[RMDB]
RNA sequence: GGGAACGACUCGAGUAGAGUCGAAAAGAUAUGGAAAUCCCAUAGACAUGAAUGAUAGAUCGGAAACGAUCUAUAUUCAACAGCUAUGGAUUUCCUAAGUCAAAACCUUUGAGUUCGCUCAAAGGAAGUCUCUUAUAUAGUUCGCUAUAUAAGAGACAAAAGAAACAACAACAACAAC
Reactivity to DMS in 0.01 (KOAc 150mM, MgCl2 10mM, bicine 150mM(pH8.5), 24C), signal-to-noise 5, nucleotides 027 to 126: g000a050u000a280u010g010g010a020a000a000u000c190c140c140a010u000a010g000a060c120a210u010g000a020a010u010g000a030u000a000g000a000u000c010g020g000a080a070a140c010g020a010u000c000u000a000u000a020u000u000c000a070a110c250a130g010c000u010a010u000g000g000a040u000u000u000c000c000u000a010a100g000u000c010a160a070a100a130c010c000u000u000u000g000a010g030u000u020c300g020c010u000c000a010a010a010g010g010a080a070
Reactivity to 2A3 in 0.01 (KOAc 150mM, MgCl2 10mM, bicine 150mM(pH8.5), 24C), signal-to-noise 4, nucleotides 027 to 126: g000a000u030a010u060g010g020a000a000a010u050c090c080c030a010u010a010g030a040c130a200u270g010a020a010u070g240a050u070a000g010a000u000c010g020g030a040a040a020c020g000a000u000c000u010a000u000a000u000u010c010a050a100c120a140g020c000u010a000u010g000g000a010u000u010u000c000c000u010a040a000g010u010c020a020a040a150a300c000c000u010u000u020g020a010g000u070u210c300g040c110u010c010a000a010a010g000g010a020a020